RNA sequence: GGGAACGACUCGAGUAGAGUCGAAAAAGUAUCUAAUUCGUUAGAUACUCGGGGAGGGGUGAGGCGGCCGUGUGCGCAGACAGUGCUCCAGCCGCGCGCGCGAAUUUCGCCUAUUCGUAGGCGAAAAUGGUCUAAUAUGUUUCGACAUAUUAGACCAAAAAGAAACAACAACAACAAC
Reactivity to DMS in 0.01 (KOAc 150mM, MgCl2 10mM, bicine 150mM(pH8.5), 24C), signal-to-noise 5, nucleotides 027 to 126: a020g000u000a000u000c010u000a010a040u000u010c170g020u000u000a010g000a010u000a000c000u000c060g010g000g000g000a100g000g010g010g020u000g010a110g010g000c040g010g010c040c020g020u010g020u000g010c010g020c020a100g010a070c160a100g020u000g010c040u000c040c030a100g010c020c020g010c020g010c040g010c060g010c060g020a090a170u000u000u000c000g010c010c000u000a020u000u010c170g020u000a010g010g000c000g000a000a000a020a070
Reactivity to 2A3 in 0.01 (KOAc 150mM, MgCl2 10mM, bicine 150mM(pH8.5), 24C), signal-to-noise 2, nucleotides 027 to 126: a000g010u020a000u020c000u010a010a010u050u050c100g030u040u010a000g000a010u010a010c000u010c020g020g000g000g050a120g000g010g000g010u070g030a060g060g050c040g000g020c040c020g040u060g000u020g010c020g000c010a020g050a190c050a070g110u040g070c020u040c040c020a040g010c010c020g000c000g030c010g000c000g000c000g040a030a030u000u020u010c010g010c000c000u020a010u010u020c180g030u020a000g000g000c040g000a000a000a000a000